An RNA of 177 nucleotides, treated with DMS and 2A3 and read out base by base. Reactivities are given for positions 27 through 126. The 2A3 profile rests on 787 reads. The reactions ran in a buffer of 150 mM KOAc, 10 mM MgCl2 and 150 mM bicine (pH 8.5), at 24 C.

[RMDB]
RNA sequence: GGGAACGACUCGAGUAGAGUCGAAAAGACCGUCAGUUAGACGGAAGAAGUGCAUAAAUCCACAACGGAAGACAAGAUACUGCACAAAUGUGGAUAAGCGUACGGAUCUACGUGCGCUAAACGUGAGGAGCAUUAGCGUGUUCGCACGCUAAUGCUCAAAAGAAACAACAACAACAAC
Reactivity to DMS in 0.01 (KOAc 150mM, MgCl2 10mM, bicine 150mM(pH8.5), 24C), signal-to-noise 1, nucleotides 027 to 126: g040a020c000c010g000u040c000a280g050u110u000a040g000a000c000g000g000a030a150g000a210a000g000u020g000c080a100u010a040a200a000u000c080c000a070c110a000a110c250g000g000a220a050g000a180c100a050a000g000a140u060a030c000u000g020c040a010c010a020a100a000u000g010u090g000g000a020u000a080a000g130c000g000u000a000c000g060g000a050u080c130u040a110c020g010u000g010c010g000c000u000a000a050a000c200g030u050g040a060g000
Reactivity to 2A3 in 0.01 (KOAc 150mM, MgCl2 10mM, bicine 150mM(pH8.5), 24C), signal-to-noise 1, nucleotides 027 to 126: g080a100c000c000g000u000c000a030g020u250u220a010g000a000c080g020g040a000a000g120a000a000g000u120g000c000a030u020a190a300a060u000c000c000a010c000a000a000c020g000g220a040a040g080a040c090a070a020g060a000u270a300c050u100g000c070a000c000a140a020a020u150g000u070g000g000a010u000a110a020g020c000g000u050a000c000g000g020a040u040c050u060a100c020g000u000g000c000g000c000u000a000a000a000c040g050u050g000a060g080